[RMDB]
RNA sequence: GGGAACGACUCGAGUAGAGUCGAAAAUCGAGGUGCUUGGCGAAAAGGAAUUGAAGAAGCUCGGCAUGGGGGCGCUUCUUGGCGUUGCGCAAGGCUCCGUGCGCCCGCCGCGUCUUGUCGUGAUGGAGUAUGAGUAGCGAUUCGUCGCUACUCAUACAAAAGAAACAACAACAACAAC
Reactivity to DMS in 0.01 (KOAc 150mM, MgCl2 10mM, bicine 150mM(pH8.5), 24C), signal-to-noise 2, nucleotides 027 to 126: u010c080g000a140g030g000u000g010c040u000u010g020g010c030g010a060a040a100a090g000g000a090a090u010u010g000a120a100g000a150a140g030c050u000c060g020g010c040a060u000g020g030g030g000g020c060g020c070u010u010c090u000u000g010g000c030g010u000u000g000c020g030c030a030a060g010g010c060u010c060c070g000u000g010c020g020c010c270c030g000c010c050g010c110g010u010c040u000u000g000u000c070g010u000g010a120u010g020g020a300